[RMDB]
RNA sequence: GGGAACGACUCGAGUAGAGUCGAAAAUUCGCCGGUUGCAGUAACUGAACUACCGAAUGUUGCAACGCCAUUCGCAUUCAAUGAACCCGAAGCAUUUACAUUUAUCGGCAUUACAGUACCAUUGAUAUUAAACAUUAUAUUUCCGGCUGUAUUGCGCAUUGUACCCCGAAUUCGUUCGGGGUACAAUAAAAGAAACAACAACAACAAC
Reactivity to 2A3 in 0.01 (KOAc 150mM, MgCl2 10mM, bicine 150mM(pH8.5), 24C), signal-to-noise 2, nucleotides 027 to 156: u090u010c070g040c040c000g060g000u060u050g040c060a070g040u070a090a080c040u040g070a080a020c050u110a110c120c090g050a070a120u110g000u110u130g080c070a140a010c060g060c050c000a040u050u060c020g020c060a030u090u020c040a040a120u130g010a090a020c050c000c020g070a020a010g020c040a030u080u080u150a070c020a030u180u250u190a150u220c040g100g000c000a000u000u040a020c000a000g030u040a080c010c010a070u060u140g010a010u030a020u080u180a170a110a030c040a150u250u090a030u060a000u150u050u070c020c000g000g000c010u020g000u000a000u000u070g020c060g010c000
Reactivity to DMS in 0.01 (KOAc 150mM, MgCl2 10mM, bicine 150mM(pH8.5), 24C), signal-to-noise 1, nucleotides 027 to 156: u000u000c030g010c050c030g030g000u000u000g000c000a120g030u000a100a070c040u000g010a030a220c060u000a150c100c030g010a080a110u000g050u010u000g030c050a130a050c050g050c260c090a140u000u000c030g030c060a140u000u000c030a050a100u010g030a080a080c060c010c030g010a100a100g010c050a030u000u020u000a130c100a160u050u010u000a100u010c030g040g040c010a050u000u010a060c080a040g000u000a110c110c030a130u000u010g010a080u000a050u010u000a040a130a080c080a100u000u000a030u000a120u000u000u010c110c010g000g020c020u000g010u010a070u010u000g010c020g030c030

Structure probing data (2A3 and DMS) for a 207-nucleotide construct.
For 2A3 the reverse transcriptase was SuperScript II with manganese.
For 2A3, 788 sequencing reads were counted.
The reactions ran in a buffer of 150 mM KOAc, 10 mM MgCl2 and 150 mM bicine (pH 8.5), at 24 C.
For DMS the reverse transcriptase was MarathonRT.